Chemical mapping of a 177-nucleotide RNA with 2A3 and DMS.
For DMS the reverse transcriptase was MarathonRT.
Reactivities are given for positions 27 through 126.
The 2A3 profile rests on 1,123 reads.
[RMDB]
RNA sequence: GGGAACGACUCGAGUAGAGUCGAAAAGGCCAGUUCAUGCUAUCAAAAGACGGCCCUAAGCUCAUUGAAUACAAUGCAAGAUUCGGUGACCCUGAAGCAAUGAACGUGCUUCCUCUCUUAAAGACCCAGUAAAUCGGGUGUUCGCACCCGAUUUACUAAAAGAAACAACAACAACAAC
Reactivity to 2A3 in 0.01 (KOAc 150mM, MgCl2 10mM, bicine 150mM(pH8.5), 24C), signal-to-noise 3, nucleotides 027 to 126: g030g010c010c000a010g000u050u080c010a010u040g000c020u070a170u300c070a140a060a100a070g070a070c070g000g000c000c000c030u040a090a000g010c050u060c150a020u000u000g030a040a120u190a170c050a010a010u100g060c060a140a000g000a070u030u050c010g020g070u050g110a250c000c000c060u050g000a040a000g020c000a040a050u050g030a040a000c030g020u050g000c000u050u040c010c010u050c000u000c050u020u110a040a080a040g020a010c000c000c000
Reactivity to DMS in 0.01 (KOAc 150mM, MgCl2 10mM, bicine 150mM(pH8.5), 24C), signal-to-noise 1, nucleotides 027 to 126: g010g000c140c070a040g060u070u000c000a050u000g000c050u000a130u050c120a000a070a070a290g000a150c130g000g000c080c000c020u000a130a150g000c100u000c100a040u000u000g010a300a090u000a040c060a040a060u010g000c250a090a060g020a180u000u020c080g010g000u000g000a010c040c040c000u040g060a150a150g050c000a110a110u000g000a000a020c060g000u120g000c000u000u000c070c000u000c040u020c040u000u060a060a070a010g000a150c020c000c040
The DMS profile rests on 744 reads. Conditions: 150 mM KOAc, 10 mM MgCl2 and 150 mM bicine (pH 8.5), 24 C.